[RMDB]
RNA sequence: GGGAACGACUCGAGUAGAGUCGAAAAGAUAUGGAGCAUGAACUACAAGAUGACGGCUUUGAUUCGAAGAACUAGCUCGGAAACGAGCUAGGGAGAAUCAAAGCUACAUCUUGCAUGCUCCUAAGUCCGUUGUAUACCGGUUCGCCGGUAUACAACGAAAAGAAACAACAACAACAAC
Reactivity to DMS in 0.01 (KOAc 150mM, MgCl2 10mM, bicine 150mM(pH8.5), 24C), signal-to-noise 2, nucleotides 027 to 126: g000a100u000a300u010g010g000a000g010c000a010u000g000a080a060c080u030a300c030a020a000g000a020u000g000a130c180g000g000c020u000u000u000g010a000u000u000c030g010a110a180g030a140a150c000u010a000g030c000u010c000g000g000a120a140a210c000g020a020g010c000u000a000g010g000g000a040g000a000a010u000c010a000a000a010g000c000u000a000c010a010u000c020u000u000g010c000a000u000g010c000u000c000c010u000a040a100g010u000c010
Reactivity to 2A3 in 0.01 (KOAc 150mM, MgCl2 10mM, bicine 150mM(pH8.5), 24C), signal-to-noise 2, nucleotides 027 to 126: g080a040u170a070u250g010g000a000g000c030a000u010g020a170a110c030u250a080c300a040a000g000a020u070g220a300c220g050g000c040u000u000u010g010a000u020u000c070g170a300a020g000a050a040c000u000a000g000c000u000c000g010g030a080a110a030c010g000a000g000c000u000a000g030g000g000a030g010a020a000u010c000a000a000a030g030c000u000a000c020a000u010c000u010u010g010c000a010u000g020c000u000c000c000u000a030a000g000u000c020

Conditions: 150 mM KOAc, 10 mM MgCl2 and 150 mM bicine (pH 8.5), 24 C. The record gives the reactivity of an RNA of 177 nucleotides to DMS and 2A3. Reactivities are given for positions 27 through 126. For DMS, 1,529 sequencing reads were counted. The data come from the RNA Mapping Database (RMDB), library TTRINS. For 2A3 the reverse transcriptase was SuperScript II with manganese.